[RMDB]
About this RNA:
This 170-nucleotide RNA was probed chemically with DMS and 2A3. The RNA was probed in 150 mM KOAc, 10 mM MgCl2 and 150 mM bicine (pH 8.5) at 24 C. For DMS, 26,721 sequencing reads were counted.

RNA sequence: GGGAACGACUCGAGUAGAGUCGAAAACUUCUCGAGAUCCUCAGCUUUUUUCCUUGAGUUCACCCACUGCUCGAGGACGUCUUCCCUUCCCCCGCGAUUCUUCUUCGACUCGGCCCGGCUCAUUUCGACACUGUCAUCUUCGGAUGACAGAAAAGAAACAACAACAACAAC
Reactivity to DMS in 0.01 (KOAc 150mM, MgCl2 10mM, bicine 150mM(pH8.5), 24C), signal-to-noise 7, nucleotides 027 to 129: c140u000u000c060u020c050g000a150g020a110u010c000c000u000c000a030g040c100u040u000u020u020u050u020c060c040u010u010g000a100g020u020u040c060a210c070c030c030a200c090u010g010c020u020c010g020a040g060g030a100c120g010u000c060u020u030c000c000c000u000u020c020c010c010c040c080g000c110g030a010u040u000c000u050u010c010u020u000c020g030a110c000u010c090g020g050c060c100c050g030g030c110u020c080a040u020u010u000c070g040a200c220a180
Reactivity to 2A3 in 0.01 (KOAc 150mM, MgCl2 10mM, bicine 150mM(pH8.5), 24C), signal-to-noise 7, nucleotides 027 to 129: c020u060u020c030u030c020g060a060g000a070u040c000c010u040c040a060g040c070u090u070u030u020u070u120c030c000u050u060g050a010g030u070u080c060a110c010c010c010a050c060u060g010c000u000c010g010a030g000g010a120c020g030u020c070u040u020c020c000c000u020u020c010c000c000c000c000g040c030g020a060u030u020c010u030u000c000u030u050c030g070a080c010u020c020g010g000c000c020c000g000g000c020u040c040a060u010u060u030c010g010a020c000a010